[RMDB]
RNA sequence: GGGAACGACUCGAGUAGAGUCGAAAAGGUAGCAGAGAAGAGACUAGCCUUCAGACUAGAUAGUAUCACACUACUGGUACAUAGUAGAGACAUACAUAGAUGCGUAUGACACAUCAGAGCUGCCAUGAUAUCGGGCAGUAUUCGUACUGCCCGAUAUAAAAGAAACAACAACAACAAC
Reactivity to DMS in 0.01 (KOAc 150mM, MgCl2 10mM, bicine 150mM(pH8.5), 24C), signal-to-noise 4, nucleotides 027 to 126: g030g030u000a010g030c020a070g010a140g010a090a090g000a220g020a150c030u020a030g000c010c010u000u020c200a200g000a090c030u000a020g010a120u000a080g020u000a030u020c100a120c300a150c040u000a020c030u000g000g010u020a090c160a100u000a050g010u000a010g000a080g000a130c180a040u000a040c050a090u010a100g010a040u020g010c090g000u010a060u010g010a100c080a040c050a080u010c010a110g000a110g010c010u000g000c010c000a130u010g010
Reactivity to 2A3 in 0.01 (KOAc 150mM, MgCl2 10mM, bicine 150mM(pH8.5), 24C), signal-to-noise 2, nucleotides 027 to 126: g030g000u020a010g000c040a020g070a010g020a210a030g050a030g020a040c030u030a020g060c000c000u070u130c050a040g040a090c000u060a030g070a120u110a070g050u040a040u060c050a030c020a010c110u110a020c010u060g030g010u100a080c050a080u070a040g020u000a020g020a010g010a060c020a030u090a000c000a020u140a040g150a090u110g050c020g040u030a040u140g040a020c000a000c000a070u040c000a010g030a000g100c020u010g000c020c020a020u140g020

An RNA of 177 nucleotides, treated with DMS and 2A3 and read out base by base. DMS adducts were read by reverse transcription with MarathonRT. The DMS profile rests on 2,547 reads. For 2A3 the reverse transcriptase was SuperScript II with manganese.